[RMDB]
RNA sequence: GGGAACGACUCGAGUAGAGUCGAAAAUGCCUUCGGCAACAGUUGCGAAGAUCGGAAGCUUUUCACCCUUGGAACCUUCCCAGGUUUCGCCACCCUUCUUCGGAUGGAUACCGCCGACCAUCUGCGACAGCAUCACCACUUUCGAGUGGUGAUGCUGAAAAGAAACAACAACAACAAC
Reactivity to DMS in 0.01 (KOAc 150mM, MgCl2 10mM, bicine 150mM(pH8.5), 24C), signal-to-noise 1, nucleotides 027 to 126: u020g010c030c020u000u030c080g020g000c010a180a160c090a110g020u000u010g050c020g010a010a070g000a010u000c140g020g000a100a080g020c070u000u020u000u000c130a250c110c070c040u000u020g010g000a000a040c300c030u010u030c060c040c090a230g000g040u000u000u010c060g020c070c090a100c050c000c050u010u010c080u000u010c090g000g050a010u010g010g030a080u000a100c090c070g000c020c040g000a070c050c030a040u000c020u010g050c200g020a100